[RMDB]
RNA sequence: GGGAACGACUCGAGUAGAGUCGAAAAUUGAAGGUGCGGUAAAACGCACUGGAGGACCGAACCCACGUACGUUGAAAAGUGCGGGGAUGAGGUGUGGGUAGCGGAGAAAUUCCAAACGAACUUGGAGAUAGCUGGUUCUCUCCGAAAUAGCUUUAGGGAAUAAUCAUCUCUUCGGAGAUGAUUAUUCAAAAGAAACAACAACAACAAC
Reactivity to 2A3 in 0.01 (KOAc 150mM, MgCl2 10mM, bicine 150mM(pH8.5), 24C), signal-to-noise 3, nucleotides 027 to 156: u050u050g020a050a010g000g000u000g000c000g010g010u040a000a010a020a040c000g020c000a000c000u000g020g010a030g010g030a010c010c030g010a050a060c010c010c010a130c060g000u030a010c010g030u080u230g160a170a110a060a070g030u020g010c010g000g010g000g020a040u050g050a040g000g000u020g020u080g010g010g020u030a020g070c020g030g030a010g060a030a130a050u130u020c030c000a040a040a020c090g050a040a030c040u030u070g020g000a080g010a050u110a050g090c050u050g060g000u110u000c040u010c010u000c020c010g030a050a060a050u080a020g050c030u070u080u120a140g070g100
Reactivity to DMS in 0.01 (KOAc 150mM, MgCl2 10mM, bicine 150mM(pH8.5), 24C), signal-to-noise 3, nucleotides 027 to 156: u000u010g020a220a250g010g010u020g030c020g040g000u000a120a080a120a250c010g000c000a010c010u010g020g010a260g020g010a100c020c030g000a200a230c000c000c000a050c010g020u000a030c000g030u010u020g010a140a130a120a160g020u010g010c040g000g000g010g020a040u000g000a190g000g030u000g020u000g000g010g010u000a080g010c020g040g000a060g000a030a030a110u000u000c020c010a050a070a300c050g000a060a080c120u000u000g000g010a130g000a130u000a110g020c060u000g000g020u000u000c030u000c030u000c010c020g020a060a080a080u000a060g010c040u000u010u000a120g010g000
Conditions: 150 mM KOAc, 10 mM MgCl2 and 150 mM bicine (pH 8.5), 24 C. The record gives the reactivity of an RNA of 207 nucleotides to 2A3 and DMS. DMS adducts were read by reverse transcription with MarathonRT. The 2A3 profile rests on 2,581 reads. For DMS, 4,063 sequencing reads were counted. It was measured as part of the RMDB library PDB130.